[RMDB]
Chemical mapping of a 177-nucleotide RNA with DMS. Values cover nucleotides 27 to 126. The data come from the RNA Mapping Database (RMDB), library TTRINS. The reactions ran in a buffer of 150 mM KOAc, 10 mM MgCl2 and 150 mM bicine (pH 8.5), at 24 C.

RNA sequence: GGGAACGACUCGAGUAGAGUCGAAAAGAUAUGGACGUGAUGACCGAGUACUUACCACUACCCACCCGAUUCUUCGGAAACGAAGAUUCGGAGGUGGUAAGUACUCGGCAAUGUCACGUCCUAAGUCCGUGACUAUUGACUUCGGUCAAUAGUCACGAAAAGAAACAACAACAACAAC
Reactivity to DMS in 0.01 (KOAc 150mM, MgCl2 10mM, bicine 150mM(pH8.5), 24C), signal-to-noise 1, nucleotides 027 to 126: g000a190u010a290u000g000g000a010c000g000u000g000a010u000g020a090c000c000g000a030g020u000a010c000u000u000a000c000c000a060c020u010a170c120c120c120a300c120c000c040g010a000u000u000c000u010u000c000g000g010a030a120a120c010g010a050a000g000a040u000u000c000g010g020a080g000g000u010g010g000u000a000a000g000u010a000c000u000c010g000g020c070a030a050u000g010u000c000a010c000g000u010c010c000u010a000a080g000u000c040